[RMDB]
RNA sequence: GGGAACGACUCGAGUAGAGUCGAAAAGUUGCAGCCGCGUCUGUACGUCCUGCAGGAAUUCCUGGUAUUGAUACAUCCAGCACCUUAACCGUACCUUCUAACCUUCGGCGCCAGAACGCAGUACGUCAUAAAUCUCCACACGGCACCCAUCUCGCCACAUCUCGCUAUCGUUCGCGAUAGCGAGAUGAAAAGAAACAACAACAACAAC
Reactivity to 2A3 in 0.01 (KOAc 150mM, MgCl2 10mM, bicine 150mM(pH8.5), 24C), signal-to-noise 2, nucleotides 027 to 156: g090u080u070g000c010a000g030c000c050g050c030g050u100c070u040g040u040a030c010g050u040c000c000u030g070c010a070g030g110a090a120u180u140c010c000u010g040g010u090a130u100u110g080a080u060a160c020a070u090c030c020a000g050c050a060c000c040u090u160a050a020c040c010g070u030a050c010c010u080u030c060u070a050a150c020c030u100u100c050g030g010c000g000c000c000a080g030a070a000c040g000c030a000g000u010a030c020g060u000c030a010u060a180a110a030u090c040u050c010c000a090c000a010c040g020g000c010a040c010c020c000a020u070c080u030c080g090c040c020a020